[RMDB]
RNA sequence: GGGAACGACUCGAGUAGAGUCGAAAAGAUAUGGAUGGCCAGUCGCGAAGAACUCGGAAACGAGGGAGCGAAUCUGGGCCAUCCUAAGUCAAACUCGUUCCUAUAGCUUCGGCUAUAGGAACGAGAACCAAUCGGUCAGGUUCGCCUGACCGAUUGGAAAAGAAACAACAACAACAAC
Reactivity to DMS in 0.01 (KOAc 150mM, MgCl2 10mM, bicine 150mM(pH8.5), 24C), signal-to-noise 1, nucleotides 027 to 126: g000a030u000a300u020g000g000a030u010g040g000c000c010a040g000u000c000g000c000g000a100a130g000a120a200c020u000c000g030g000a070a110a160c020g000a030g000g030g000a100g010c000g010a010a020u050c050u010g050g010g000c000c000a030u000c000c000u010a010a150g000u020c050a070a150a170c010u000c010g000u000u000c000c000u000a030u000a000g000c000u000u060c230g030g000c010u000a000u010a000g000g000a030a000c000g040a000g030a020a140
Reactivity to 2A3 in 0.01 (KOAc 150mM, MgCl2 10mM, bicine 150mM(pH8.5), 24C), signal-to-noise 1, nucleotides 027 to 126: g040a000u130a030u190g000g000a000u000g000g000c020c000a010g020u000c000g010c010g110a300a120g020a050a020c000u000c000g000g060a100a050a060c000g000a010g020g000g000a020g030c000g040a040a060u110c060u080g120g000g000c000c000a010u010c000c010u020a020a010g070u000c040a050a030a190c010u020c000g010u000u000c000c000u000a000u000a000g010c010u050u130c300g150g000c010u000a000u030a000g000g030a010a000c000g020a000g000a020a020

Description: The record gives the reactivity of an RNA of 177 nucleotides to DMS and 2A3. The data come from the RNA Mapping Database (RMDB), library TTRDEL. Values are in units of 0.01, from 0 to 300, in steps of 10. The RNA was probed in 150 mM KOAc, 10 mM MgCl2 and 150 mM bicine (pH 8.5) at 24 C.